[RMDB]
RNA sequence: GGGAACGACUCGAGUAGAGUCGAAAAGAUUGUCCUGGCAUAUGGCAUAGACAAACAUUAUGCAGAAAGAGGAGAGGAAAUUAAAUAAUGACAGUUGCUAUAAAACAAUCCAUCAAUAGUUUUAGCUGUAGAGGUUUCAUUCUAAUUCAAUUGUAGAAGCUAUUACUCAGUUCGCUGAGUAAUAGCUAAAAGAAACAACAACAACAAC
Reactivity to 2A3 in 0.01 (KOAc 150mM, MgCl2 10mM, bicine 150mM(pH8.5), 24C), signal-to-noise 2, nucleotides 027 to 156: g080a090u120u100g010u130c050c070u040g020g020c020a060u020a030u110g030g000c030a020u080a040g080a080c050a080a070a000c010a010u050u120a020u120g020c030a010g120a000a160a000g030a010g040g030a020g020a000g010g080a000a060a030u120u060a050a050a030u210a010a040u080g040a010c040a030g030u090u030g050c070u040a010u100a150a100a010a000c080a040a000u040c060c040a030u060c020a080a100u060a090g010u020u020u110u110a000g000c000u000g000u030a060g050a030g100g020u090u090u050c020a030u060u000c010u060a040a030u150u120c060a070a080u140u180g040u070a030g020a130
Reactivity to DMS in 0.01 (KOAc 150mM, MgCl2 10mM, bicine 150mM(pH8.5), 24C), signal-to-noise 1, nucleotides 027 to 156: g000a180u010u000g040u010c040c020u000g040g020c000a120u020a110u010g020g030c040a100u010a150g030a110c060a120a110a110c060a060u010u020a030u000g000c010a090g020a060a080a120g030a090g020g010a130g000a060g000g010a120a090a130u000u000a050a060a170u010a070a080u000g000a110c040a080g030u000u000g010c020u000a100u040a050a040a080a030c020a050a100u000c030c050a050u040c090a060a120u000a110g000u000u000u000u000a080g030c020u010g000u010a110g060a240g010g020u010u000u000c040a130u000u000c060u000a040a090u000u000c040a040a110u000u020g020u000a040g040a060
This 207-nucleotide RNA was probed chemically with 2A3 and DMS. DMS adducts were read by reverse transcription with MarathonRT. For 2A3, 819 sequencing reads were counted. 2A3 adducts were read by reverse transcription with SuperScript II with manganese.